[RMDB]
RNA sequence: GGGAACGACUCGAGUAGAGUCGAAAAGCAUUGUCUGUCGCGCCUGAAGUUACCGCUAUAGCAGAGAAAAUAAGACUAUUAGAUAAGGAAUUACGAAGGGCUUCGGUAUCAUUGAAAACUUUGAAGAACCUUCAAUCUAGUUCGCUAGAUUGAAGGUAAAAGAAACAACAACAACAAC
Reactivity to DMS in 0.01 (KOAc 150mM, MgCl2 10mM, bicine 150mM(pH8.5), 24C), signal-to-noise 4, nucleotides 027 to 126: g000c050a070u000u000g000u010c060u000g010u000c060g030c300g000c040c010u010g010a160a220g000u000u010a120c030c000g000c040u000a050u000a020g010c000a160g000a110g000a050a060a080a060u000a030a300g020a080c020u000a030u010u000a030g000a140u030a120a070g000g000a060a070u000u000a040c060g000a090a200g000g020g010c030u000u000c060g000g020u000a040u000c020a050u000u010g000a050a070a070a070c050u010u000u010g010a080a110g000a130
Reactivity to 2A3 in 0.01 (KOAc 150mM, MgCl2 10mM, bicine 150mM(pH8.5), 24C), signal-to-noise 2, nucleotides 027 to 126: g020c040a080u080u080g000u110c060u030g040u050c000g000c030g030c060c000u010g010a020a010g000u020u040a070c010c030g010c030u010a000u020a030g000c010a010g010a010g050a220a130a050a050u090a020a020g040a050c000u020a040u100u170a020g080a100u090a070a100g030g000a050a150u180u070a060c040g060a060a000g000g000g000c000u040u030c010g020g050u030a020u110c010a010u000u020g050a040a050a040a080c070u140u050u100g140a170a090g030a100